[RMDB]
RNA sequence: GGGAACGACUCGAGUAGAGUCGAAAAGCAAAGCGUCAAAAAAAUAGAGAGCUUUGCGAGACCUACCAAGGGUGAAGAGAUACCAUCCAAGGAGCUGAAGAGAAAUCUCACUUUAGACGCCUGGGGAAAAAGACCCUUUCGUUCGCGAAAGGGUCAACACCAAGCUAGUGUUCGCACUAGCUUGGUGAAAAGAAACAACAACAACAAC
Reactivity to 2A3 in 0.01 (KOAc 150mM, MgCl2 10mM, bicine 150mM(pH8.5), 24C), signal-to-noise 1, nucleotides 027 to 156: g020c000a010a000a000g000c030g050u080c140a150a060a280a300a090a000a030u300a030g070a040g000a030g030c000u000u000u000g000c000g000a000g000a000c010c000u000a050c030c040a050a080g000g020g020u060g040a070a070g040a030g040a110u120a080c020c000a040u000c030c000a030a090g040g000a040g040c050u080g030a050a000g030a070g070a080a210a160u080c030u040c040a070c030u060u040u110a060g030a110c050g070c040c020u090g040g020g000g020a000a030a010a050a130g030a060c000c030c030u000u000u000c010g010u030u030c290g070c000g110a010a000a000g000g010g010u000c000a000a010
Structure probing data (2A3) for a 207-nucleotide construct. 2A3 adducts were read by reverse transcription with SuperScript II with manganese. Reactivities are given for positions 27 through 156. The data come from the RNA Mapping Database (RMDB), library M2RFPK. The reactions ran in a buffer of 150 mM KOAc, 10 mM MgCl2 and 150 mM bicine (pH 8.5), at 24 C.